Structure probing data (DMS and 2A3) for a 177-nucleotide construct. For DMS the reverse transcriptase was MarathonRT. For 2A3, 1,664 sequencing reads were counted. High DMS reactivity at an A or C suggests that its Watson-Crick edge is free. Conditions: 150 mM KOAc, 10 mM MgCl2 and 150 mM bicine (pH 8.5), 24 C. For 2A3 the reverse transcriptase was SuperScript II with manganese.
RNA sequence: GGGAACGACUCGAGUAGAGUCGAAAACGCAGUUGGUUAGCGCGCCGCCCUGUCACGGCGGAGGUCGCGGGUUCGAGUCCCGUCAGGGUCGCCAGGACGGUGAGGCACAUGCUGCCUUCCGGCCAGGGCGUCAUACCCCUUUCGAGGGGUAUGACGCAAAAGAAACAACAACAACAAC
Reactivity to DMS in 0.01 (KOAc 150mM, MgCl2 10mM, bicine 150mM(pH8.5), 24C), signal-to-noise 2, nucleotides 027 to 126: c090g020c040a090g020u010u010g010g020u010u000a070g000c040g010c050g070c010c010g000c030c010c060u010g030u010c160a140c220g010g020c020g020g000a030g010g000u010c160g010c010g000g000g000u000u010c110g000a300g020u010c000c030c050g000u010c110a180g000g000g000u000c030g010c000c000a110g020g010a040c020g000g020u010g000a020g000g020c000a030c050a190u010g020c120u000g000c010c010u000u000c010c000g010g010c020c020a070g000g020
Reactivity to 2A3 in 0.01 (KOAc 150mM, MgCl2 10mM, bicine 150mM(pH8.5), 24C), signal-to-noise 1, nucleotides 027 to 126: c070g000c020a020g030u140u110g030g030u050u110a030g020c020g000c010g040c040c030g050c020c000c000u060g140u140c050a030c140g020g030c030g000g020a060g040g040u170c020g000c020g000g010g000u040u110c070g060a010g050u050c060c000c010g010u020c050a090g090g020g060u010c020g000c000c020a010g030g010a000c000g010g040u160g010a020g040g100c010a010c000a090u280g060c060u000g000c030c000u000u020c000c000g010g050c050c000a070g030g100